[RMDB]
RNA sequence: GGGAACGACUCGAGUAGAGUCGAAAACUUUUUCCAAAGCCAUAUUGGAAGUUUCGAGACGGGACAGGGUUAACAGUUCCCCGGCCAGCGUAUCCAUGCGGGUCAGUUCGCCUUCCAGCCGUUUGAGAUCACCGUAUAGGUUCGCCUAUACGGUGAUAAAAGAAACAACAACAACAAC
Reactivity to DMS in 0.01 (KOAc 150mM, MgCl2 10mM, bicine 150mM(pH8.5), 24C), signal-to-noise 3, nucleotides 027 to 126: c090u000u020u020u010u010c000c000a000a060a150g010c170c140a070u040a070u010u000g010g000a070a080g010u010u000u010c040g010a150g000a070c040g000g000g040a130c150a090g000g020g000u020u030a030a080c090a130g000u000u000c010c000c000c090g010g010c030c020a060g020c030g020u040a070u020c140c140a090u000g020c000g000g020g000u000c040a090g000u000u010c080g010c030c010u000u010c140c040a170g010c020c050g000u000u030u000g000a140g010
Reactivity to 2A3 in 0.01 (KOAc 150mM, MgCl2 10mM, bicine 150mM(pH8.5), 24C), signal-to-noise 5, nucleotides 027 to 126: c010u150u060u030u080u010c030c010a070a030a060g190c080c030a130u080a140u200u030g050g010a070a060g010u020u030u060c060g020a070g000a060c020g000g040g040a020c010a060g010g050g010u020u060a080a020c010a060g010u010u010c000c000c000c000g000g000c000c000a020g020c030g050u060a060u120c040c040a060u190g030c040g000g030g000u010c010a030g010u030u040c020g030c020c000u010u040c020c030a080g060c010c030g050u010u020u130g160a160g010
Overview:
Source: RMDB library OK1LIB, as collected in RNAgym. Structure probing data (DMS and 2A3) for a 177-nucleotide construct. The 2A3 profile rests on 3,918 reads. Reactivities are rounded to 0.1 and cut off at 0 and 3. DMS adducts were read by reverse transcription with MarathonRT.